[RMDB]
RNA sequence: GGGAACGACUCGAGUAGAGUCGAAAAGGGUCUGGCCGAGCAGCUCCAGGCGGUCCCAGAGCUCGGUGACGUGCUCUACGGCAUCUCUAUCCAGCAUAUCUCCUCGUUUCGCGGGUUGGGGCGGCUUUCGCUGUAGGGCACCAGGCGAUGGUCGUCCAUUUACUCGAAUUUUCGAAUUCGAGUAAAUAAAAGAAACAACAACAACAAC
Reactivity to 2A3 in 0.01 (KOAc 150mM, MgCl2 10mM, bicine 150mM(pH8.5), 24C), signal-to-noise 4, nucleotides 027 to 156: g060g000g020u060c020u020g070g030c010c010g000a020g000c030a000g010c010u000c040c020a040g070g050c030g040g040u020c010c000c000a050g020a020g030c010u020c030g020g040u040g060a040c050g000u020g010c010u000c040u080a040c050g040g010c040a110u040c070u000c020u120a120u070c040c040a030g030c030a070u060a120u140c050u040c030c020u030c040g050u040u080u070c120g000c090g040g050g010u060u100g030g000g010g000c010g000g000c000u030u090u060c050g000c020u040g020u050a070g010g020g020c020a010c000c020a000g030g000c000g020a030u020g010g000u010c010g010u020c020c000
Reactivity to DMS in 0.01 (KOAc 150mM, MgCl2 10mM, bicine 150mM(pH8.5), 24C), signal-to-noise 2, nucleotides 027 to 156: g010g060g020u010c000u010g010g020c040c030g000a080g010c000a200g030c030u000c010c010a080g010g020c030g040g010u000c020c030c020a110g000a160g010c010u000c010g030g030u000g020a140c060g010u000g010c030u000c000u000a050c000g000g000c030a120u010c050u000c050u000a100u010c030c030a110g010c050a120u010a140u000c020u010c020c020u000c030g040u000u000u000c060g000c070g000g000g000u000u000g010g030g020g050c010g020g010c030u000u000u000c020g020c020u000g010u000a050g010g010g020c040a030c010c040a140g010g020c020g000a080u000g010g030u000c010g010u010c020c040
Structure probing data (2A3 and DMS) for a 207-nucleotide construct.
Source: RMDB library OK3TST, as collected in RNAgym.
The reactions ran in a buffer of 150 mM KOAc, 10 mM MgCl2 and 150 mM bicine (pH 8.5), at 24 C.
2A3 adducts were read by reverse transcription with SuperScript II with manganese.
Reactivities are given for positions 27 through 156.